[RMDB]
RNA sequence: GGGAACGACUCGAGUAGAGUCGAAAAACUGAGACCACGAUGCAGCGGGUGCUGAGCCUGAAUCACGCCCUGGUGGAGUCCUUUGCUGAGCCCCUCAUACUGGCCACUUGCUGGCAGCAGCAGCUGCCCGAGAAUACAUAUUCGUAUGUAUUCUCGGAAAAGAAACAACAACAACAAC
Reactivity to DMS in 0.01 (KOAc 150mM, MgCl2 10mM, bicine 150mM(pH8.5), 24C), signal-to-noise 9, nucleotides 027 to 126: a100c080u000g010a120g010a130c030c020a060c080g010a100u010g010c060a060g020c090g010g000g020u000g010c130u000g000a110g010c060c070u000g000a110a080u000c060a050c080g010c030c020c020u010g010g020u000g000g010a100g000u000c030c030u000u000u010g010c050u000g000a120g010c040c010c020c040u010c070a070u010a090c070u000g000g000c020c030a060c090u000u000g010c080u000g010g000c030a020g010c020a100g010c120a070g010c020u000g000c050
Reactivity to 2A3 in 0.01 (KOAc 150mM, MgCl2 10mM, bicine 150mM(pH8.5), 24C), signal-to-noise 7, nucleotides 027 to 126: a000c070u080g020a040g050a070c020c020a030c060g060a050u130g020c030a030g050c040g040g030g020u090g010c090u030g010a020g040c000c060u090g080a100a060u060c020a010c060g010c000c000c010u060g040g030u040g020g020a040g060u060c020c000u090u080u110g030c040u040g020a050g030c020c010c000c010u030c020a080u140a110c030u020g050g000c010c000a050c040u060u130g010c030u020g040g010c000a010g000c010a010g010c010a020g000c010u010g010c010
Structure probing data (DMS and 2A3) for a 177-nucleotide construct.
High DMS reactivity at an A or C suggests that its Watson-Crick edge is free.
2A3 adducts were read by reverse transcription with SuperScript II with manganese.
It was measured as part of the RMDB library OK2TRN.